[RMDB]
RNA sequence: GGGAACGACUCGAGUAGAGUCGAAAAACGCUGGUUACGACCAGCGAUUGUGUCAAUAUGCGAUGAUGUGUUGUGAUGGCACAGCGUCAUCACGUGGUGACGCAACAACGCCUAGUACGCUAGGCGAUAGCCGUGUCAAUUUCGAUUGACACGGCUAAAAAGAAACAACAACAACAAC
Reactivity to DMS in 0.01 (KOAc 150mM, MgCl2 10mM, bicine 150mM(pH8.5), 24C), signal-to-noise 3, nucleotides 027 to 126: a040c020g000c000u000g000g010u000u000a120c260g010a070c010c000a010g010c000g000a000u000u010g020u000g000u010c010a020a050u020a020u000g010c040g000a040u000g030a010u010g010u000g000u010u010g040u000g010a260u040g000g050c020a000c020a110g000c000g010u000c000a000u000c000a030c080g020u010g010g000u030g010a000c000g020c020a040a050c170a080a150c010g010c000c010u010a000g020u000a110c220g060c050u010a010g000g000c000g030a090
Reactivity to 2A3 in 0.01 (KOAc 150mM, MgCl2 10mM, bicine 150mM(pH8.5), 24C), signal-to-noise 5, nucleotides 027 to 126: a020c010g000c000u010g000g040u060u080a100c240g030a000c040c000a010g000c000g010a010u020u030g000u000g000u000c000a040a030u020a030u140g050c040g060a090u040g030a040u040g050u040g130u260u020g050u050g070a260u180g120g060c010a000c000a020g010c000g020u040c010a000u000c010a000c060g040u100g030g050u020g000a000c020g000c000a010a010c040a010a020c030g000c000c000u000a000g020u020a020c220g030c070u000a000g000g000c010g000a030